[RMDB]
An RNA of 177 nucleotides, treated with DMS and read out base by base. It was measured as part of the RMDB library OK2TRN. For DMS, 1,299 sequencing reads were counted. Conditions: 150 mM KOAc, 10 mM MgCl2 and 150 mM bicine (pH 8.5), 24 C.
RNA sequence: GGGAACGACUCGAGUAGAGUCGAAAAGCACCGCCGCAGUGCAGCCAACCCCCUACCGCACACACGCUGCCCGAGCCUGCUACUGUCGCAGUCGUACCCGGUCCGGGGCCGGACCCGGGUAGGCGUAAGUAUAGCGUGGUUUCGACCACGCUAUACUAAAAGAAACAACAACAACAAC
Reactivity to DMS in 0.01 (KOAc 150mM, MgCl2 10mM, bicine 150mM(pH8.5), 24C), signal-to-noise 1, nucleotides 027 to 126: g030c030a090c020c020g020c060c080g000c040a120g060u000g020c040a100g000c070c060a110a180c020c000c020c000c040u000a040c110c060g000c020a080c080a140c100a030c040g000c050u000g000c020c000c040g000a140g020c070c030u020g050c090u000a080c030u010g010u010c150g010c070a070g020u000c040g000u000a050c030c010c010g010g020u000c010c020g000g000g000g000c110c020g030g000a050c010c010c010g020g000g010u000a010g000g000c020g020u060a050